[RMDB]
RNA sequence: GGGAACGACUCGAGUAGAGUCGAAAAGGGGUCGAACUUGGACCUUCGUCGACGUCAUCGAUCUAUACUGAAGCCUCCACGGUAUAGGGAGACGGACGAAGCUAGUUCGACGGAGGCACCCAAAAGCACCCUGAUUAGUUCGCUAAUCAGGGUGCAAUCAAUCGUUAUUCUUCGGAAUAACGAUUGAAAAAGAAACAACAACAACAAC
Reactivity to DMS in 0.01 (KOAc 150mM, MgCl2 10mM, bicine 150mM(pH8.5), 24C), signal-to-noise 1, nucleotides 027 to 156: g050g000g030g010u000c020g020a010a060c030u000u010g050g040a120c300c000u000u010c000g010u000c000g010a190c060g000u040c020a250u010c160g000a190u000c000u010a000u000a020c000u020g000a080a120g040c000c000u000c000c010a300c070g010g000u000a010u000a020g000g000g010a080g010a040c010g010g010a090c010g000a060a040g000c040u000a070g010u000u000c020g020a070c020g030g020a000g060g090c020a130c020c030c020a110a050a150a190g000c000a030c000c010c000u010g000a020u000u000a000g030u010u020c300g030c000u010a000a010u000c010a000g000g000g020u010g000c000a000a030
Reactivity to 2A3 in 0.01 (KOAc 150mM, MgCl2 10mM, bicine 150mM(pH8.5), 24C), signal-to-noise 4, nucleotides 027 to 156: g070g000g060g030u040c030g010a010a010c080u290u300g130g050a040c000c040u000u000c010g000u000c040g190a210c010g020u000c000a100u300c040g000a000u000c000u000a000u000a010c000u020g040a110a020g010c000c000u000c000c000a000c010g010g000u010a000u000a000g000g000g010a020g000a000c000g010g000a000c000g000a000a000g020c030u040a010g000u010u000c000g000a010c010g020g000a010g010g000c000a040c000c010c000a040a110a020a020g000c000a000c000c000c000u000g000a000u000u010a000g040u040u080c260g000c200u000a000a000u000c000a010g000g000g000u000g000c000a000a010